RNA sequence: GGGAACGACUCGAGUAGAGUCGAAAACGAGAGCGAUUCGUCGCUCUCGAAAGAGUGCACGGCAGCACAACAAAAGCCGAAGAAAAGCAGAGCCGACUGCAAAAACUCCCAUGUUCGCAUGGGAGAAUCUAAUCCAGUACUUCGGUACUGGAUUAGAAAAAGAAACAACAACAACAAC
Reactivity to DMS in 0.01 (KOAc 150mM, MgCl2 10mM, bicine 150mM(pH8.5), 24C), signal-to-noise 2, nucleotides 027 to 126: c020g000a000g000a000g000c020g000a060u000u020c190g010u000c000g000c000u000c000u000c000g020a000a040a090g020a250g020u000g000c020a010c000g000g010c020a220g000c050a040c000a160a120c120a100a070a130a120g000c000c020g000a110a200g020a090a140a120a160g000c020a040g000a100g030c100c150g000a180c030u010g030c000a050a020a090a120a100c000u000c010c010c010a010u010g000u000u000c240g020c000a000u010g010g000g020a000g030a040a030
Reactivity to 2A3 in 0.01 (KOAc 150mM, MgCl2 10mM, bicine 150mM(pH8.5), 24C), signal-to-noise 1, nucleotides 027 to 126: c010g030a010g000a010g020c020g000a020u040u050c140g050u010c010g130c000u000c020u000c010g000a010a000a000g060a000g000u010g000c060a020c090g040g000c030a090g020c000a030c000a070a270c040a010a100a040a080g050c040c030g040a120a060g080a050a150a000a000g000c010a020g040a010g100c090c050g120a140c020u010g000c000a020a020a030a160a090c010u040c020c000c000a010u010g060u040u070c270g000c110a000u000g000g000g000a000g000a000a000
Conditions: 150 mM KOAc, 10 mM MgCl2 and 150 mM bicine (pH 8.5), 24 C.
The record gives the reactivity of an RNA of 177 nucleotides to DMS and 2A3.
For DMS, 794 sequencing reads were counted.
2A3 adducts were read by reverse transcription with SuperScript II with manganese.
2A3 is a SHAPE reagent: it acylates the 2'-hydroxyl of flexible nucleotides of all four kinds.